[RMDB]
Structure probing data (2A3 and DMS) for a 177-nucleotide construct. For 2A3, 3,080 sequencing reads were counted. Values cover nucleotides 27 to 126. Source: RMDB library OK2TRN, as collected in RNAgym.
RNA sequence: GGGAACGACUCGAGUAGAGUCGAAAACGGAGGCGUGCAAAGGUUUCCUCGGGCCAGACGGAGAUUGGCCCUCGAGUGCAAAGGCAGAAGGGAGCUUGACUGCAAGACCCACCCGUCGAGCAGGGACAUAACUCCGUUAGUUCGCUAACGGAGUUAUAAAAGAAACAACAACAACAAC
Reactivity to 2A3 in 0.01 (KOAc 150mM, MgCl2 10mM, bicine 150mM(pH8.5), 24C), signal-to-noise 2, nucleotides 027 to 126: c020g060g000a050g030g060c060g050u100g020c040a000a040a120g080g010u030u090u030c000c020u070c030g010g000g020c000c010a020g030a060c080g140g010a130g000a190u040u030g020g000c000c000c000u010c050g050a040g030u080g040c080a020a080a230g090g000c010a020g050a130a020g030g000g010a060g040c000u040u060g060a080c040u060g000c010a050a040g020a020c030c020c020a050c040c020c020g020u050c010g020a020g000c040a030g030g000g000a020c020
Reactivity to DMS in 0.01 (KOAc 150mM, MgCl2 10mM, bicine 150mM(pH8.5), 24C), signal-to-noise 5, nucleotides 027 to 126: c120g010g010a080g010g030c060g040u000g020c070a060a090a100g010g000u000u010u000c050c010u010c090g010g010g010c010c010a040g020a120c130g000g010a130g020a150u000u000g010g010c010c010c010u000c060g000a060g000u010g010c110a060a100a110g020g010c030a060g010a120a080g010g000g000a080g010c040u000u000g010a110c080u010g010c040a080a140g000a080c020c020c050a110c130c050c040g000u000c040g010a170g000c060a080g000g010g010a100c190